[RMDB]
RNA sequence: GGGAACGACUCGAGUAGAGUCGAAAAACGGAUGGUACGCCAUCCGACCAUUGGGUAGAAGCGUUCAAUCAGCACCGUGACGGUGCAGAUGGGAAAUGGCCCAUGAUACGCACCAUACGUGGUGCGAAAAAGCCAUCGGUGUUCGCACCGAUGGCAAGGAGUCUAAAUCGUUCGCGAUUUAGACUCCAAAAGAAACAACAACAACAAC
Reactivity to 2A3 in 0.01 (KOAc 150mM, MgCl2 10mM, bicine 150mM(pH8.5), 24C), signal-to-noise 2, nucleotides 027 to 156: a000c000g020g000a000u030g000g010u070a010c260g050c030c000a000u070c010c000g000a020c000c000a080u110u180g050g010g000u100a110g030a300a020g100c020g040u050u070c030a090a090u000c020a020g000c010a020c000c000g050u090g230a110c170g020g020u010g000c010a010g000a020u010g050g060g080a030a020a050u070g030g000c000c000c000a000u050g060a010u020a030c030g000c000a000c000c000a000u070a110c210g110u070g000g000u000g020c000g020a020a000a000a000a000g000c000c000a000u000c000g000g000u000g050u040u060c150g000c060a000c000c000g000a000u000g020g030c000a000a010
Record summary: Structure probing data (2A3) for a 207-nucleotide construct. Reactivities are given for positions 27 through 156. The 2A3 profile rests on 1,042 reads. The reactions ran in a buffer of 150 mM KOAc, 10 mM MgCl2 and 150 mM bicine (pH 8.5), at 24 C.